[RMDB]
The data come from the RNA Mapping Database (RMDB), library RNAMAK. An RNA of 207 nucleotides, treated with 2A3 and DMS and read out base by base. 2A3 adducts were read by reverse transcription with SuperScript II with manganese. For DMS the reverse transcriptase was MarathonRT. For DMS, 2,245 sequencing reads were counted. The reactions ran in a buffer of 150 mM KOAc, 10 mM MgCl2 and 150 mM bicine (pH 8.5), at 24 C.
RNA sequence: GGGAACGACUCGAGUAGAGUCGAAAAGUAGGAGUUCGCUCCUACAAAAAACCUUUGUGCUAGUUUGGCUGACAUGCUUUGAUGAACCCAUUGGGUUCUACCAAAGCAACAGCAGCCCACCUAGCACUCUGGUAAAAAACUGGACUUCGGUCCAGAAAUCUUUUAAAUCAUUCGUGAUUUAAAAGAUAAAAGAAACAACAACAACAAC
Reactivity to 2A3 in 0.01 (KOAc 150mM, MgCl2 10mM, bicine 150mM(pH8.5), 24C), signal-to-noise 2, nucleotides 027 to 156: g010u010a010g000g010a000g010u050u090c130g070c100u010c010c010u030a000c010a010a020a000a000a010a010c010c000u020u020u000g000u000g000c010u000a000g010u020u000u020g000g000c000u000g020a150c040a120u020g000c000u000u010u010g000a020u020g000a010a000c060c010c100a300u200u300g010g020g010u020u020c000u010a050c010c010a000a000a000g010c000a000a020c040a050g060c000a000g000c000c010c000a000c000c000u000a000g010c000a000c000u000c000u000g010g010u100a130a130a020a000a030a050c000u010g000g010a000c010u020u060c300g080g000u000c010c000a010g010a010a080
Reactivity to DMS in 0.01 (KOAc 150mM, MgCl2 10mM, bicine 150mM(pH8.5), 24C), signal-to-noise 1, nucleotides 027 to 156: g020u000a030g000g000a040g020u000u000c300g020c020u000c000c000u000a040c020a000a110a090a060a180a100c010c000u000u000u000g030u010g010c020u000a010g000u000u000u000g030g030c010u000g000a050c070a300u000g000c000u000u010u000g000a010u000g000a000a050c020c000c010a300u000u020g050g010g020u000u000c020u020a030c000c000a000a010a010g020c000a030a050c010a110g030c060a000g010c010c000c010a060c240c010u000a020g010c000a020c010u010c050u000g000g030u000a000a020a050a090a120a230c000u000g010g000a060c020u000u020c300g090g030u000c000c000a000g020a090a090